Structure probing data (DMS) for a 177-nucleotide construct. The reactions ran in a buffer of 150 mM KOAc, 10 mM MgCl2 and 150 mM bicine (pH 8.5), at 24 C.
[RMDB]
RNA sequence: GGGAACGACUCGAGUAGAGUCGAAAAACCCCCCGGUCCCCUCUAUUGAAAAGAAAGGCAAGGAGACUCACCUGUCGUCGUCGACGAAGGCAUGUGAGCCCAACUCGAUGAAGAGCGUCAGCGGACGGUAUAUCGGUACGUUCGCGUACCGAUAUACAAAAGAAACAACAACAACAAC
Reactivity to DMS in 0.01 (KOAc 150mM, MgCl2 10mM, bicine 150mM(pH8.5), 24C), signal-to-noise 1, nucleotides 027 to 126: a120c050c040c000c040c000c010g000g000u010c020c030c010c030u000c060u000a150u020u020g010a050a060a100a110g000a100a070a090g010g000c050a070a050g080g020a180g000a080c020u010c010a020c010c010u010g010u000c010g000u000c020g010u010c210g020a140c060g020a160a050g000g000c020a060u000g020u010g000a050g010c020c010c050a150a130c120u020c030g030a050u000g010a090a040g000a070g010c040g000u010c060a090g010c050g010g010a040c070g000
Source: RMDB library VIROID, as collected in RNAgym.